The record gives the reactivity of an RNA of 177 nucleotides to DMS and 2A3. Values cover nucleotides 27 to 126.
RNA sequence: GGGAACGACUCGAGUAGAGUCGAAAAAGUGCAAGAACCAGAUGGCGAGACUUUGCCUUCCAUGCAGUUCUUUGUGGUAAGCUGUAAACUCAAAUGAUUUCAGAGGAUUGCCUUGCUGGUCACAAUCCGUAUGCCAUUCGUUCGCGAAUGGCAUACGAAAAGAAACAACAACAACAAC
Reactivity to DMS in 0.01 (KOAc 150mM, MgCl2 10mM, bicine 150mM(pH8.5), 24C), signal-to-noise 1, nucleotides 027 to 126: a090g010u000g030c300a210a020g020a100a040c020c010a020g000a090u000g000g040c010g000a020g000a120c070u000u000u000g020c230c020u000u010c000c170a070u000g020c110a030g030u000u000c090u000u030u020g030u000g000g000u010a060a050g010c040u000g010u000a030a060a080c180u020c110a030a130a030u000g000a010u010u010u000c050a050g000a070g030g000a130u000u000g010c000c010u000u010g020c020u020g000g000u000c070a140c190a040a070u010c080
Reactivity to 2A3 in 0.01 (KOAc 150mM, MgCl2 10mM, bicine 150mM(pH8.5), 24C), signal-to-noise 2, nucleotides 027 to 126: a000g110u090g090c060a080a030g040a100a040c010c000a000g010a020u020g010g030c010g010a020g000a040c020u000u000u050g000c020c000u010u020c050c010a040u030g040c030a000g000u090u050c040u070u150u230g150u090g040g120u130a070a030g020c000u020g050u080a080a110a090c060u050c150a080a130a100u150g050a080u060u090u000c010a000g010a010g040g010a030u010u000g000c000c030u010u090g070c010u000g000g040u010c010a000c030a050a060u070c030
The reactions ran in a buffer of 150 mM KOAc, 10 mM MgCl2 and 150 mM bicine (pH 8.5), at 24 C. For 2A3, 1,258 sequencing reads were counted.